[RMDB]
RNA sequence: GGGAACGACUCGAGUAGAGUCGAAAAGAUAUGGAUCCCAGGGAGCUGGUGGGUCGGAAACGACCCUAACAGCGAGGAUCUAAGGGAUCCUAAGUCAAACCGAUCGUAUGUUCGCAUACGAUCGGAAGUAAUGCACAUGGUUCGCCAUGUGCAUUACAAAAGAAACAACAACAACAAC
Reactivity to DMS in 0.01 (KOAc 150mM, MgCl2 10mM, bicine 150mM(pH8.5), 24C), signal-to-noise 3, nucleotides 027 to 126: g000a020u000a010u010g000g000a020u000c000c000c010a070g010g000g010a020g050c000u000g000g000u000g000g010g020u010c000g010g010a010a010a030c000g010a010c000c000c010u000a030a100c010a000g020c010g010a060g010g000a010u020c000u000a140a060g010g010g010a010u000c000c000u000a000a080g000u000c000a080a130a190c000c000g000a020u000c000g010u000a000u000g010u000u010c240g010c000a000u000a010c000g010a010u000c000g020g000a010a020
Reactivity to 2A3 in 0.01 (KOAc 150mM, MgCl2 10mM, bicine 150mM(pH8.5), 24C), signal-to-noise 3, nucleotides 027 to 126: g000a000u010a010u050g000g010a000u000c000c000c010a020g000g010g010a000g000c020u020g000g040u050g010g020g000u010c000g000g000a010a000a000c000g000a020c000c010c010u010a210a020c010a010g000c020g020a120g000g000a010u050c070u250a210a300g010g000g000a000u000c000c000u000a010a010g000u000c040a070a060a110c000c000g000a010u000c000g020u000a000u020g070u040u070c300g000c160a000u000a000c010g000a010u010c010g010g010a000a010